[RMDB]
RNA sequence: GGGAACGACUCGAGUAGAGUCGAAAACCUGGCAUGAUCUGGGACAGCGACAUCUUGGGGACAGAGAUGGGCCAGGAAGGAGGGGGCAGAGAGCUAGAGAUGGAGACCCACCACGGGGUGGGAGGCCCGACUAACCAAAUUUCGAUUUGGUUAGUCGAAAAGAAACAACAACAACAAC
Reactivity to 2A3 in 0.01 (KOAc 150mM, MgCl2 10mM, bicine 150mM(pH8.5), 24C), signal-to-noise 3, nucleotides 027 to 126: c000c010u010g040g030c050a080u080g020a110u060c030u070g040g020g060a040c030a040g030c020g060a040c030a080u040c030u070u120g060g000g000g000a020c030a050g090a020g020a130u070g020g030g000c000c020a020g020g020a020a030g040g030a050g000g040g000g000g000c040a020g040a010g010a010g060c020u080a020g010a000g000a080u060g010g010a030g050a040c000c010c000a000c000c000a040c120g280g040g000g010u020g000g000g000a030g030g000c030c020
Reactivity to DMS in 0.01 (KOAc 150mM, MgCl2 10mM, bicine 150mM(pH8.5), 24C), signal-to-noise 6, nucleotides 027 to 126: c020c000u000g010g010c050a080u010g000a090u000c040u000g010g010g010a110c090a080g000c080g010a110c070a050u000c050u000u000g000g010g010g010a130c100a070g000a080g000a080u000g000g010g010c030c040a050g010g010a080a060g000g010a080g010g010g000g010g010c060a040g000a090g000a070g010c050u000a080g010a100g010a080u010g010g000a090g010a160c030c020c010a050c040c030a160c300g000g000g020g020u000g000g010g010a090g010g010c050c090

Structure probing data (2A3 and DMS) for a 177-nucleotide construct. Values cover nucleotides 27 to 126. The 2A3 profile rests on 5,231 reads. The reactions ran in a buffer of 150 mM KOAc, 10 mM MgCl2 and 150 mM bicine (pH 8.5), at 24 C. DMS adducts were read by reverse transcription with MarathonRT. 2A3 adducts were read by reverse transcription with SuperScript II with manganese. DMS (dimethyl sulfate) methylates the pairing face of unpaired adenines and cytosines. The data come from the RNA Mapping Database (RMDB), library OK2TRN.